[RMDB]
RNA sequence: GGGAACGACUCGAGUAGAGUCGAAAACUUAUAAAGAACUUGCUACAAAGUCUUCCAAGUAACUUCACUAUUGACUCAGUGACAAUUGACAUGACUCAUAUGAGCAAAAUAUGUCCCCUAGAAGCAAGAAGGUUGAUUGACAUUGAGGCAUUGACAAAGAUACGGUACAAUUCGUUGUACCGUAUCUAAAAGAAACAACAACAACAAC
Reactivity to 2A3 in 0.01 (KOAc 150mM, MgCl2 10mM, bicine 150mM(pH8.5), 24C), signal-to-noise 3, nucleotides 027 to 156: c030u080u070a080u120a160a180a020g040a040a070c000u010u020g030c040u120a070c070a080a140a050g010u030c030u080u030c090c020a040a070g050u100a120a050c030u120u160c070a050c070u110a120u080u100g060a040c000u010c020a000g000u000g010a010c000a020a030u030u040g020a020c030a050u120g030a150c010u000c040a040u130a100u300g030a020g000c020a040a090a000a010u230a100u110g080u050c020c000c020c000u030a060g000a070a000g020c070a020a030g080a060a020g110g000u050u050g020a040u010u010g000a010c000a000u000u020g000a010g000g000c010a030u070u110g070a050c050a050a120
Reactivity to DMS in 0.01 (KOAc 150mM, MgCl2 10mM, bicine 150mM(pH8.5), 24C), signal-to-noise 2, nucleotides 027 to 156: c030u020u000a160u000a100a170a100g020a200a110c020u000u000g060c020u000a270c110a100a120a080g000u000c020u000u000c030c030a030a160g010u000a050a100c040u000u000c040a120c080u000a120u010u000g000a030c000u000c010a040g000u010g000a130c030a040a040u000u010g010a080c070a110u000g010a080c030u000c020a080u000a090u010g000a040g000c030a050a060a070a190u000a090u000g000u020c020c010c010c050u000a110g010a070a070g000c040a060a050g010a100a110g010g020u000u000g020a000u020u000g000a140c010a050u000u000g030a030g000g000c000a060u000u010g030a140c070a060a140

An RNA of 207 nucleotides, treated with 2A3 and DMS and read out base by base. For DMS, 3,204 sequencing reads were counted. Reactivities are given for positions 27 through 156. The RNA was probed in 150 mM KOAc, 10 mM MgCl2 and 150 mM bicine (pH 8.5) at 24 C.